[RMDB]
RNA sequence: GGGAACGACUCGAGUAGAGUCGAAAAGAUAUGCCAUCGGGUGGCAACAGCACCCUGGUUUACUUCUCCUGCGAAGACUGUGCCGUAUCGGAAGCACGGGUUGCUGAGGCCGGCGGUGAGCUGCUGCCCGGCAGCAGAUUUUCGAAUCUGCUGCCGGAAAAGAAACAACAACAACAAC
Reactivity to 2A3 in 0.01 (KOAc 150mM, MgCl2 10mM, bicine 150mM(pH8.5), 24C), signal-to-noise 1, nucleotides 027 to 126: g020a070u100a050u130g000c000c000a020u040c020g000g150g240u080g060g000c040a050a010c000a030g000c000a010c020c000c070u030g000g150u100u120u090a040c000u040u030c020u010c000c070u080g060c020g030a070a030g090a210c120u130g070u160g160c070c000g030u110a070u200c090g060g020a020a010g000c030a020c030g030g030g000u030u110g000c000u000g000a010g010g030c000c020g020g000c020g030g000u020g010a090g000c020u050g000c020u060g000c000
Reactivity to DMS in 0.01 (KOAc 150mM, MgCl2 10mM, bicine 150mM(pH8.5), 24C), signal-to-noise 1, nucleotides 027 to 126: g000a160u010a030u010g000c000c010a030u000c020g000g000g030u020g010g000c010a020a050c070a060g000c000a030c050c000c000u000g000g010u000u000u000a080c050u000u000c040u000c060c100u000g010c060g010a080a090g000a090c130u000g010u000g010c070c010g000u000a070u010c090g020g010a110a020g010c120a050c130g010g000g000u010u000g030c050u020g000a110g000g020c020c000g020g000c030g010g010u000g020a110g040c000u000g000c030u000g000c110